RNA sequence: GGGAACGACUCGAGUAGAGUCGAAAACGCGAGCGGGCGGGGCUUUCCGUACAAGCGCCCGAAAGCCGGAGGGGGUGGCCCCCCAUACCCCGGCCCUGCGGCCCAACCCCACCGGCCGAAGUACGGCGGAGCAUGAUUGGUUCGCCGAUCAUGCUCCAAAAGAAACAACAACAACAAC
Reactivity to DMS in 0.01 (KOAc 150mM, MgCl2 10mM, bicine 150mM(pH8.5), 24C), signal-to-noise 5, nucleotides 027 to 126: c130g010c090g000a090g040c080g000g010g010c040g000g000g010g020c020u000u010u030c010c010g000u010a020c020a060a050g010c020g010c000c000c010g010a050a120a140g000c000c010g010g000a130g030g010g000g000g020u030g010g010c030c020c020c030c010c040a080u040a120c090c070c010c020g000g000c020c020c020u020g010c070g030g000c030c000c080a100a080c020c000c020c010a070c050c050g000g000c000c020g010a100a080g010u000a010c020g000g000c300
Reactivity to 2A3 in 0.01 (KOAc 150mM, MgCl2 10mM, bicine 150mM(pH8.5), 24C), signal-to-noise 6, nucleotides 027 to 126: c070g030c030g030a050g040c040g010g030g010c020g010g010g040g030c020u020u050u060c010c000g000u010a010c010a040a040g030c040g120c000c010c000g040a170a060a000g010c000c000g000g010a070g020g020g010g000g020u090g040g020c010c000c000c000c020c010a010u140a100c020c020c010c010g020g000c000c020c010u050g010c040g020g000c010c000c010a060a090c020c000c000c000a030c000c000g020g000c000c010g020a050a000g000u010a000c010g000g000c030